Conditions: 150 mM KOAc, 10 mM MgCl2 and 150 mM bicine (pH 8.5), 24 C. Chemical mapping of a 207-nucleotide RNA with 2A3. Reactivities are given for positions 27 through 156.
RNA sequence: GGGAACGACUCGAGUAGAGUCGAAAAUCCUAGAGAGCUUGGCCGUCGGGCCUUAUACCCGACUUGCUGAGUUUCUCUAGGAGAGUCCCUUUCCCAGCCCUGAGGCGGCUGGUCAAUAAAAGCCACAAAAACUACCACUGGUUCGCCAGUGGUAGAAGUUUAUAUCUAACUUCGGUUAGAUAUAAACAAAAGAAACAACAACAACAAC
Reactivity to 2A3 in 0.01 (KOAc 150mM, MgCl2 10mM, bicine 150mM(pH8.5), 24C), signal-to-noise 1, nucleotides 027 to 156: u000c000c000u010a000g010a000g000a000g000c000u000u020g000g010c050c030g000u000c000g000g000g050c010c030u050u090a070u150a060c000c000c000g000a000c030u010u100g000c000u000g000a000g000u040u300u030c000u000c000u000a000g000g000a000g000a000g050u010c000c000c000u000u060u030c000c000c000a010g000c040c000c010u160g070a090g050g010c040g040g000c040u070g020g020u070c050a000a010u060a260a060a020a000g020c000c000a070c050a050a110a040a060a010c000u000a000c000c000a000c000u000g000g030u020u020c070g030c100c000a000g000u010g000g000u000a000g000a000a000